[RMDB]
RNA sequence: GGGAACGACUCGAGUAGAGUCGAAAACAGCAGUACCUGAUAGUGUGUGGGAGUGGUCACCAGCAACACUUGAAAUCUGGUUUGUCCCUUCUGCCUGAACACGCAGUCUACCACCGAUAGAGUCACCACCAUAACGACCACCUACACUAUGCUGGUGUAUAGCGUACACUUUCGAGUGUACGCUAUAAAAAGAAACAACAACAACAAC
Reactivity to 2A3 in 0.01 (KOAc 150mM, MgCl2 10mM, bicine 150mM(pH8.5), 24C), signal-to-noise 3, nucleotides 027 to 156: c040a010g110c030a010g040u060a040c010c020u060g020a020u050a030g020u040g020u020g000u070g020g060g030a120g060u040g000g010u040c010a000c030c010a010g050c070a010a100c070a080c120u050u140g110a070a080a040u100c020u020g000g050u070u090u150g060u040c000c020c000u070u050c050u030g020c000c010u070g070a090a010c050a020c090g030c000a020g020u000c030u060a110c030c040a040c040c040g080a090u070a090g040a020g070u070c030a010c050c000a030c030c020a040u050a100a030c040g030a010c010c010a000c020c010u040a010c010a010c030u030a020u080g070c040u010g000g030u000g010
Reactivity to DMS in 0.01 (KOAc 150mM, MgCl2 10mM, bicine 150mM(pH8.5), 24C), signal-to-noise 2, nucleotides 027 to 156: c060a090g020c070a100g010u000a100c030c010u020g020a100u000a020g040u010g010u010g020u000g020g010g000a160g040u000g000g010u010c030a120c070c070a070g000c060a070a060c080a110c050u020u000g010a090a120a130u000c040u010g020g010u000u010u000g010u010c030c010c010u000u000c030u000g000c010c030u010g010a070a070c040a110c090g060c040a060g010u000c000u000a100c060c030a080c050c040g010a200u010a100g000a140g010u010c040a070c020c000a000c000c020a090u000a060a050c030g020a060c010c010a070c030c000u000a080c040a040c060u000a040u010g020c010u000g010g030u000g000
Source: RMDB library OK3TST, as collected in RNAgym. Chemical mapping of a 207-nucleotide RNA with 2A3 and DMS. Values cover nucleotides 27 to 156. For 2A3, 2,512 sequencing reads were counted. For DMS the reverse transcriptase was MarathonRT.